[RMDB]
The record gives the reactivity of an RNA of 177 nucleotides to DMS and 2A3.
Source: RMDB library TTRDEL, as collected in RNAgym.
For 2A3 the reverse transcriptase was SuperScript II with manganese.
RNA sequence: GGGAACGACUCGAGUAGAGUCGAAAAGAUAUGGAGAGACCCAACGCCACGGCAGCUAUGAAGUCGGAAACGAUGGAGCUGCCGUCGCGUUGCUCUCCUAAGUCAAACACUUGGUUCGCCAAGUGAACAGUACAAGUCAGUUCGCUGACUUGUACUGAAAAGAAACAACAACAACAAC
Reactivity to DMS in 0.01 (KOAc 150mM, MgCl2 10mM, bicine 150mM(pH8.5), 24C), signal-to-noise 6, nucleotides 027 to 126: g010a030u000a300u010g000g010a010g000a020g020a300c210c300c050a020a020c010g010c000c090a020c010g010g010c000a010g010c000u000a250u010g010a090a180g000u000c000g010g000a120a080a200c000g000a010u000g010g000a030g010c000u000g010c000c010g010u000c130g000c000g000u000u000g020c000u000c000u000c000c010u000a000a070g010u000c020a140a090a250c000a010c000u000u000g000g010u000u010c230g010c010c000a000a010g010u010g000a060a140
Reactivity to 2A3 in 0.01 (KOAc 150mM, MgCl2 10mM, bicine 150mM(pH8.5), 24C), signal-to-noise 4, nucleotides 027 to 126: g020a010u080a040u140g000g000a000g010a000g030a050c100c120c060a000a000c010g000c000c020a000c000g000g000c000a000g000c010u070a210u300g050a050a000g020u010c020g010g050a080a060a050c020g000a010u040g000g040a000g000c000u000g060c000c000g000u000c000g000c000g000u010u010g000c000u000c000u000c000c000u000a110a010g030u010c040a080a030a070c010a000c010u020u010g030g030u090u100c300g030c100c000a000a010g010u000g000a040a040